[RMDB]
RNA sequence: GGGAACGACUCGAGUAGAGUCGAAAAUUAUAACACUGCAUUAAUGCAUCCUUGUACUGCCUCUACAGAACAGGAGUUGAAGAGAGCUUUAGAGGUGCAAAAGCUGGAUAUGUGGAAAGGUGUACCAAGACAAACCCGAUUUCGAUCGGGUUUGUCUAAAAGAAACAACAACAACAAC
Reactivity to 2A3 in 0.01 (KOAc 150mM, MgCl2 10mM, bicine 150mM(pH8.5), 24C), signal-to-noise 1, nucleotides 027 to 126: u080u010a110u020a140a050c080a000c010u060g030c030a050u000u180a170a000u240g040c000a120u160c040c020u100u060g200u250a050c050u010g000c020c010u100c000u090a010c000a230g180a180a000c000a000g200g030a130g230u000u070g040a090a000g070a010g080a000g010c000u090u100u100a000g000a020g000g000u000g040c000a000a000a090a000g010c130u000g000g110a040u060a020u130g000u070g040g020a080a060a060g000g000u120g000u000a060c030c030a020
Reactivity to DMS in 0.01 (KOAc 150mM, MgCl2 10mM, bicine 150mM(pH8.5), 24C), signal-to-noise 1, nucleotides 027 to 126: u030u050a050u030a010a050c080a050c060u000g010c040a070u030u040a100a160u050g000c000a080u020c090c030u060u030g000u000a020c020u000g070c020c000u000c050u000a040c080a050g000a040a050c130a080g000g000a060g000u000u000g000a070a080g000a020g000a030g050c030u000u000u010a050g000a040g140g000u000g010c060a070a020a070a240g010c050u000g010g000a030u000a010u000g000u020g000g000a010a090a060g000g030u000g000u020a040c020c210a100